[RMDB]
RNA sequence: GGGAACGACUCGAGUAGAGUCGAAAAUUGGUGGGAUAUGGACGAUUGUUAUGGUCCGCUUUACUAAGACAGUCGGAAACGAUCGAGUAAAGAACUACGGAACGUCAAUCGUCCUAAGUCGUAUGAAGACGACGUUAACGUUCGCGUUAACGUCGUCAAAAGAAACAACAACAACAAC
Reactivity to 2A3 in 0.01 (KOAc 150mM, MgCl2 10mM, bicine 150mM(pH8.5), 24C), signal-to-noise 1, nucleotides 027 to 126: u170u130g070g010u180g050g090g000a000u050a100u270g010g010a010c000g000a050u000u030g040u100u180a110u160g000g020u000c000c000g000c000u000u000u000a010c020u020a100a180g120a090c160a080g060u020c000g040g000a030a030a110c010g000a010u090c090g000a000g020u000a000a000a020g000a000a010c130u130a020c300g000g000a020a000c000g000u000c020a020a010u010c050g020u000c000c010u000a050a000g030u020c040g050u080a060u230g130a100a010
Reactivity to DMS in 0.01 (KOAc 150mM, MgCl2 10mM, bicine 150mM(pH8.5), 24C), signal-to-noise 2, nucleotides 027 to 126: u000u000g030g050u000g000g000g020a130u010a300u000g020g010a010c000g040a000u000u010g020u010u000a030u000g000g000u010c020c010g020c000u010u000u000a000c000u010a180a120g010a120c300a210g010u000c000g000g000a090a120a180c010g030a020u000c080g000a020g000u010a040a060a020g030a030a060c130u000a300c030g000g000a020a050c010g000u000c000a010a020u000c010g010u000c000c000u000a010a060g000u000c080g020u000a080u010g000a070a070